Structure probing data (2A3 and DMS) for a 177-nucleotide construct.
RNA sequence: GGGAACGACUCGAGUAGAGUCGAAAAAGCUCUCAGCUCUUAGAGUAACAUUAAUGAAGUAACAGGAGGCAAAAGGCCUGGAGCUAUGCUCAGCUUAGGGGUAGCUGUGUCUUUACCACAGGAUGUGGCCGUAGUUUACGUUCGCGUAAACUACGGCAAAAGAAACAACAACAACAAC
Reactivity to 2A3 in 0.01 (KOAc 150mM, MgCl2 10mM, bicine 150mM(pH8.5), 24C), signal-to-noise 2, nucleotides 027 to 126: a000g020c010u030c000u010c000a010g000c000u000c020u040u070a050g000a000g100u120a160a040c000a070u040u230a160a060u200g090a120a000g010u020a030a020c010a070g020g010a010g030g010c060a080a040a000a050g080g000c000c010u010g050g000a010g000c010u070a020u070g010c000u050c000a030g050c030u040u020a040g070g020g020g010u020a030g000c000u020g010u010g000u000c000u020u100u060a030c000c000a000c010a020g050g030a060u150g060u070g100
Reactivity to DMS in 0.01 (KOAc 150mM, MgCl2 10mM, bicine 150mM(pH8.5), 24C), signal-to-noise 2, nucleotides 027 to 126: a090g010c020u010c010u000c090a060g000c030u020c030u020u020a160g000a080g000u010a140a130c100a060u000u010a030a050u030g000a090a040g000u000a070a190c020a060g040g020a000g040g000c020a070a030a120a050g030g000c020c000u030g000g000a160g020c000u000a060u010g000c020u000c030a140g020c080u000u000a070g000g000g040g000u020a070g000c010u000g000u020g000u000c030u000u030u000a150c080c030a070c030a040g030g000a100u040g020u000g000

DMS adducts were read by reverse transcription with MarathonRT. The RNA was probed in 150 mM KOAc, 10 mM MgCl2 and 150 mM bicine (pH 8.5) at 24 C.